[RMDB]
RNA sequence: GGGAACGACUCGAGUAGAGUCGAAAACACAUAUAUAUACGUACAGGCAUAUGCACAUGCAUAUGUACAUGCAUAUGUACAUGCAUAUGUACAUGCAUACUUAAGUACGUUCACGUUUGUAUGCACACAUCGCGGAGGGUUUCGACCCUCCGCGAUGAAAAGAAACAACAACAACAAC
Reactivity to 2A3 in 0.01 (KOAc 150mM, MgCl2 10mM, bicine 150mM(pH8.5), 24C), signal-to-noise 1, nucleotides 027 to 126: c030a010c250a000u020a010u080a000u050a010u000a290c000g030u000a000c000a060g000g000c000a000u040a000u050g010c020a080c060a070u240g000c010a000u000a040u040g060u000a140c010a030u130g130c010a000u000a020u090g000u050a030c070a000u040g040c030a000u030a000u040g040u050a110c000a000u010g000c030a000u000a100c000u050u200a150a030g010u030a000c060g020u120u130c060a060c140g000u000u170u000g000u000a030u080g060c030a010c010a000